Annotation:
An RNA of 177 nucleotides, treated with 2A3 and DMS and read out base by base. The DMS profile rests on 1,847 reads. The reactions ran in a buffer of 150 mM KOAc, 10 mM MgCl2 and 150 mM bicine (pH 8.5), at 24 C. For 2A3 the reverse transcriptase was SuperScript II with manganese.

RNA sequence: GGGAACGACUCGAGUAGAGUCGAAAAGAUAUGGAAUCCUCCCAUGAUGGUCGUUGAUCUCGGAAACGAGGGAGACUAAGUGGGAGGGAUUCCUAAGUCAAAAUCGCACUGGUUCGCCAGUGCGAAACUGAGGAAAUUACUUCGGUAAUUUCCUCAGAAAAGAAACAACAACAACAAC
Reactivity to 2A3 in 0.01 (KOAc 150mM, MgCl2 10mM, bicine 150mM(pH8.5), 24C), signal-to-noise 2, nucleotides 027 to 126: g000a030u070a030u230g000g010a010a020u000c020c010u040c040c020c060a010u090g020a110u300g010g010u030c040g200u300u010g030a010u000c000u000c020g000g030a060a030a020c040g000a010g000g010g000a010g000a000c020u010a070a010g000u010g000g010g010a080g040g010g000a010u000u000c000c010u010a100a010g110u020c040a000a010a000a300u010c000g000c000a010c000u000g000g070u040u070c150g040c080c000a020g000u010g000c000g000a020a000a010
Reactivity to DMS in 0.01 (KOAc 150mM, MgCl2 10mM, bicine 150mM(pH8.5), 24C), signal-to-noise 2, nucleotides 027 to 126: g000a030u010a300u000g000g000a010a000u000c000c000u000c000c000c000a010u010g020a140u010g000g010u000c010g010u000u000g000a040u010c000u000c000g000g000a090a050a200c010g000a020g000g000g000a040g040a020c000u020a050a300g010u000g000g000g000a040g010g010g000a000u000u010c000c000u010a010a110g000u000c030a090a120a130a100u000c000g000c000a010c000u000g010g010u000u010c230g030c000c000a020g000u000g000c000g000a000a020a070